[RMDB]
RNA sequence: GGGAACGACUCGAGUAGAGUCGAAAAACGCAACAAUUAAAUAUGACGGCGCAUAUUGCAUCAAUGGCUAUAGAUGGAUUACUUAUAUUGCUAAUAGUGGACAACGUCGUUAUAUAGCGACAGGAGAGGUAGACAAGGCAGGUAAUAGAAUAAGUAACAGGUUUUACCAGUUCGCUGGUAAAACCUGAAAAGAAACAACAACAACAAC
Reactivity to 2A3 in 0.01 (KOAc 150mM, MgCl2 10mM, bicine 150mM(pH8.5), 24C), signal-to-noise 1, nucleotides 027 to 156: a000c060g050c090a050a000c080a170a090u300u280a220a000a000u100a020u020g000a010c020g000g000c010g000c010a030u090a020u070u160g040c030a020u070c100a000a170u170g040g060c130u030a020u110a100g080a090u090g070g000a030u110u140a010c010u120u000a040u070a050u140u100g000c000u040a050a050u000a250g000u020g070g010a000c040a140a010c070g000u010c000g000u030u060a040u050a000u020a080g110c020g050a050c020a040g040g020a020g000a000g000g070u130a000g000a010c000a020a070g000g040c000a000g000g020u050a080a000u010a190g060a150a110u270a140a000g060u160a100a000